[RMDB]
RNA sequence: GGGAACGACUCGAGUAGAGUCGAAAAAUCUUUAAGCAGAUGGCAGGUUCACCCCGUACGGUGCGGAAGUCCGCGCUUCCGUGAAACGCGAAAAUCGGACGGUGGCUGCAAGUCGCAUCGCAAAACCUAUAGCUUGUUAGGUUCGCCUAACAAGCAAGUUAGAAUUGCACUUCGGUGCAAUUCUAACAAAAGAAACAACAACAACAAC
Reactivity to 2A3 in 0.01 (KOAc 150mM, MgCl2 10mM, bicine 150mM(pH8.5), 24C), signal-to-noise 2, nucleotides 027 to 156: a010u110c050u010u140u130a140a040g000c070a070g010a070u030g050g020c060a050g060g020u210u160c020a020c010c000c000c010g020u030a020c030g020g020u020g000c000g020g010a000a000g010u080c110c060g100c080g030c090u000u000c000c000g020u010g100a170a090a000c150g030c040g070a070a020a010a100u070c000g010g030a010c060g000g070u070g010g000c030u030g000c020a030a030g080u110c020g000c050a020u020c020g030c020a030a030a070a040c010c000u130a080u090a250g000c000u000u000g000u000u000a000g000g020u020u020c060g040c060c000u010a000a000c010a000a000g000c000a000a000